[RMDB]
RNA sequence: GGGAACGACUCGAGUAGAGUCGAAAAUAGCUGCAACAUAAUUUGAGUAUCCUGAAAACGGGCUUUUCAGAAUGGUGUUGCCGUAUAAAAUUGUAGGAGUGCAUAGUGGCCCGUAUAGCAGGCAUUAGAGAGCUACAGAUGUUCGCAUCUGUAGCAACUACUAGUCCCUCUUCGGAGGGACUAGUAGAAAAGAAACAACAACAACAAC
Reactivity to DMS in 0.01 (KOAc 150mM, MgCl2 10mM, bicine 150mM(pH8.5), 24C), signal-to-noise 1, nucleotides 027 to 156: u000a130g030c050u000g000c010a040a090c030a040u000a050a110u000u010u000g020a210g000u000a060u000c010c010u000g030a020a010a080a030c090g030g010g020c090u000u010u020u010c040a070g010a050a000u000g010g100u000g010u000u000g000c030c070g000u000a070u000a060a030a080a120u000u000g030u000a110g000g000a140g010u000g020c020a050u000a170g070u010g030g000c010c000c010g040u010a050u000a150g050c080a020g000g030c050a100u020u010a030g000a160g010a170g010c000u000a000c010a000g010a040u000g000u000u010c300g060c050a010u000c010u000g000u000a010g020c010a000a020
Reactivity to 2A3 in 0.01 (KOAc 150mM, MgCl2 10mM, bicine 150mM(pH8.5), 24C), signal-to-noise 1, nucleotides 027 to 156: u060a010g000c000u000g060c020a000a000c000a030u120a110a080u080u010u100g020a010g060u110a080u130c000c000u040g010a020a010a020a030c050g020g030g000c030u030u050u100u090c110a100g060a220a120u110g070g010u010g010u000u060g000c000c000g000u070a110u090a120a100a080a090u170u220g060u050a080g030g110a000g040u060g010c020a030u130a130g110u070g030g030c000c000c000g000u060a000u000a010g010c000a020g000g000c000a000u150u040a030g070a020g000a020g100c010u000a000c000a020g000a010u000g000u040u090c190g020c170a000u030c000u000g000u000a000g000c010a000a000